[RMDB]
RNA sequence: GGGAACGACUCGAGUAGAGUCGAAAACAGGCGGCCUGUUUCUACGGAGCCACGUGCAUCGAUGGCGUUGGCAGCUUCUAUUGCCAGUGUACGAAGGGCAAGACGGGUCUGUUGUGCCACCUGGACGCAUGCCUAUCGGAUUCGUCCGAUAGGCAUGAAAAGAAACAACAACAACAAC
Reactivity to DMS in 0.01 (KOAc 150mM, MgCl2 10mM, bicine 150mM(pH8.5), 24C), signal-to-noise 4, nucleotides 027 to 126: c050a030g010g010c040g030g020c010c030u020g010u010u010u010c070u020a090c060g020g000a120g010c010c010a100c050g020u000g010c030a080u000c040g000a150u010g010g010c000g020u010u000g000g000c070a060g000c270u000u000c200u010a070u000u000g000c000c010a010g010u010g010u010a050c040g010a070a270g000g000g000c020a080a060g020a080c120g010g000g000u000c020u010g000u010u000g010u010g020c010c010a040c020c010u000g000g020a170c140g010
Reactivity to 2A3 in 0.01 (KOAc 150mM, MgCl2 10mM, bicine 150mM(pH8.5), 24C), signal-to-noise 3, nucleotides 027 to 126: c000a000g020g010c030g000g040c000c020u060g060u040u100u020c060u040a060c090g040g010a030g090c000c010a070c020g020u050g040c030a130u110c060g110a110u080g050g000c030g030u020u030g020g000c020a050g020c000u210u080c050u200a140u070u120g000c000c000a010g010u010g010u040a150c020g030a120a080g040g000g010c030a030a010g110a040c060g000g010g070u020c020u040g100u080u040g080u090g050c020c010a020c000c010u030g050g060a030c060g000